[RMDB]
RNA sequence: GGGAACGACUCGAGUAGAGUCGAAAAAUCAACGGCACUUGUGACACUUUUUCUUGUCAAGAUGAUGGGCACUAAGCAUCGAAACUCGCAUGUCAAUGGCAGCAUUAAGUCAUCAUCAUCGCUGCGAGGCAUGAUUAACGUUCGCGUUAAUCAUGCCAAAAGAAACAACAACAACAAC
Reactivity to DMS in 0.01 (KOAc 150mM, MgCl2 10mM, bicine 150mM(pH8.5), 24C), signal-to-noise 2, nucleotides 027 to 126: a050u000c080a070a120c180g030g010c000a020c070u000u000g040u000g000a090c080a050c200u000u000u000u000u020c110u010u030g010u000c020a040a060g030a040u000g020a000u010g000g000g020c080a090c080u020a080a150g020c040a020u010c030g040a140a090a090c060u000c070g000c070a050u010g000u000c100a000a120u000g010g000c040a030g000c070a190u000u000a050a000g000u000c080a030u000c020a060u000c020a080u000c050g020c020u000g000c020g020a120
Reactivity to 2A3 in 0.01 (KOAc 150mM, MgCl2 10mM, bicine 150mM(pH8.5), 24C), signal-to-noise 2, nucleotides 027 to 126: a040u060c020a040a000c040g080g000c010a020c090u040u080g000u070g110a010c000a070c030u090u010u060u110u060c060u080u090g050u080c030a060a030g040a070u080g010a000u010g000g010g010c060a010c060u070a040a040g000c020a040u080c020g060a070a060a040c070u080c020g020c040a010u040g010u080c050a070a070u080g080g020c000a040g030c010a040u010u120a080a000g010u020c020a050u000c010a030u050c010a020u080c090g010c020u000g000c010g050a060